Structure probing data (DMS and 2A3) for a 177-nucleotide construct. The reactions ran in a buffer of 150 mM KOAc, 10 mM MgCl2 and 150 mM bicine (pH 8.5), at 24 C. Source: RMDB library TTRDEL, as collected in RNAgym. High DMS reactivity at an A or C suggests that its Watson-Crick edge is free.
[RMDB]
RNA sequence: GGGAACGACUCGAGUAGAGUCGAAAAGAUAUGGACCACACGUAAGCGUACUAGAGCGAAGAACUCGGAAACGAGGGAGCUCAUACGCGAAGUGUGGUCCUAAGUCAAAGCCGUGUUCGCACGGCAAGACAGAAAUGUCGUUCGCGACAUUUCUGUCAAAAGAAACAACAACAACAAC
Reactivity to DMS in 0.01 (KOAc 150mM, MgCl2 10mM, bicine 150mM(pH8.5), 24C), signal-to-noise 3, nucleotides 027 to 126: g010a040u000a300u010g000g000a020c000c000a010c010a010c000g020u000a170a300g000c000g000u000a000c180u010a140g010a000g000c000g010a050a130g000a110a180c000u000c020g000g010a090a100a100c010g000a010g000g000g000a060g000c000u000c010a180u000a000c000g010c000g000a060a130g010u000g020u000g000g010u000c010c000u000a000a050g040u000c030a070a090a070g000c020c000g020u000g000u000u010c150g020c010a020c000g000g030c000a030a010
Reactivity to 2A3 in 0.01 (KOAc 150mM, MgCl2 10mM, bicine 150mM(pH8.5), 24C), signal-to-noise 1, nucleotides 027 to 126: g000a020u080a000u130g000g020a000c000c000a000c000a000c010g030u030a010a070g020c000g010u000a020c130u180a280g010a000g030c010g250a300a000g020a030a010c000u000c020g020g010a110a050a040c000g000a000g020g030g000a000g010c000u020c010a010u000a010c000g020c030g000a000a010g000u000g010u000g000g000u000c000c000u000a000a000g010u010c000a000a000a130g000c000c020g000u020g010u000u080c240g040c090a010c010g000g000c000a000a030